[RMDB]
RNA sequence: GGGAACGACUCGAGUAGAGUCGAAAAAUAAAACCACACGAUUUUCCCGAUCUAAAUCAAGCAGGUUUUACAUGAAGAAGAUUUGGCUCAGCGUGUUCUAUUCGAUACGGGUAGGAGAAGAACCCGAUCUGGAGAACGGAUUCGUCCGUUCUCCAGAAAAAGAAACAACAACAACAAC
Reactivity to 2A3 in 0.01 (KOAc 150mM, MgCl2 10mM, bicine 150mM(pH8.5), 24C), signal-to-noise 2, nucleotides 027 to 126: a000u110a000a030a000a050c010c010a040c020a030c040g040a040u040u040u090u010c050c010c040g000a050u000c010u200a060a030a000u060c000a010a010g060c000a040g030g130u000u020u020u200a120c080a080u180g040a030a080g040a040a010g000a050u000u010u050g030g020c070u050c130a030g020c060g010u040g080u050u010c040u050a090u020u130c070g030a000u040a180c000g010g040g000u050a070g010g220a190g060a300a000g000a040a030c000c000c000g030a030
Reactivity to DMS in 0.01 (KOAc 150mM, MgCl2 10mM, bicine 150mM(pH8.5), 24C), signal-to-noise 1, nucleotides 027 to 126: a070u040a050a020a080a070c060c000a130c200a030c090g000a020u000u000u000u000c000c000c000g000a050u010c050u030a050a030a110u030c030a150a090g020c160a020g020g020u000u000u000u000a170c100a060u000g000a050a110g020a040a010g010a090u000u010u010g040g000c030u000c000a000g040c000g010u000g000u010u000c060u000a170u000u000c060g000a010u030a060c000g030g000g000u000a080g000g000a090g000a100a080g000a090a140c000c000c000g020a130